[RMDB]
RNA sequence: GGGAACGACUCGAGUAGAGUCGAAAAUUAUCAGGGCACCAUGGGCCGCAGCGGGGAUACCCAUAGCCUGGGUCUCAACGGUUCCGCUUUGGACCGCCGCCUGAACUGGGACGUACGCCAAGCCCGCGAUACGACAAAAAUUCGUUUUUGUCGUAUCAAAAGAAACAACAACAACAAC
Reactivity to DMS in 0.01 (KOAc 150mM, MgCl2 10mM, bicine 150mM(pH8.5), 24C), signal-to-noise 5, nucleotides 027 to 126: u040u040a080u030c080a090g010g000g040c060a130c080c070a070u020g010g000g020c010c060g000c100a080g000c050g000g010g000g000a050u020a050c010c010c010a030u020a160g010c140c100u010g000g000g000u010c040u000c040a110a210c090g000g000u020u040c030c040g010c150u020u050u010g000g000a030c010c010g030c070c080g010c030c010u000g010a060a070c080u000g000g010g020a110c070g000u000a060c080g000c020c050a100a140g000c000c000c000g000c150
Reactivity to 2A3 in 0.01 (KOAc 150mM, MgCl2 10mM, bicine 150mM(pH8.5), 24C), signal-to-noise 9, nucleotides 027 to 126: u190u100a080u140c060a040g010g010g000c020a010c050c030a060u110g020g030g010c010c010g030c050a010g010c020g000g000g000g020a020u080a090c010c010c020a030u080a040g060c020c030u020g000g010g020u010c030u010c050a070a090c050g050g000u160u120c020c010g020c000u100u060u150g030g010a040c010c020g020c020c020g030c000c010u050g020a070a050c060u040g000g010g040a020c040g060u120a030c030g030c030c010a030a030g010c000c000c000g010c010
Background:
The record gives the reactivity of an RNA of 177 nucleotides to DMS and 2A3. The RNA was probed in 150 mM KOAc, 10 mM MgCl2 and 150 mM bicine (pH 8.5) at 24 C.